RNA sequence: GGGAACGACUCGAGUAGAGUCGAAAAGUGGUAACCUCAGCUGCUGAAGCCUAUCAGGUGUUGUCUGGAGGAUGGAGGAAUAGACGUGUGGCAUCAACAUCAAUGAACAGAGAAUCGUCUAGGUCUCCCCUGUAGCUGUGUUCGCACAGCUACAGGGAAAAGAAACAACAACAACAAC
Reactivity to DMS in 0.01 (KOAc 150mM, MgCl2 10mM, bicine 150mM(pH8.5), 24C), signal-to-noise 1, nucleotides 027 to 126: g020u000g020g010u010a100a100c040c030u000c020a130g020c010u020g020c030u000g000a120a140g020c020c050u000a070u010c180a100g010g020u010g010u000u010g010u000c050u020g000g030a060g010g010a080u000g040g010a070g030g010a060a110u000a050g000a030c060g000u010g030u010g030g000c030a070u000c060a110a080c040a130u000c170a060a090u010g020a070a110c060a060g000a160g000a070a110u000c040g020u020c040u010a050g010g010u000c000u000c040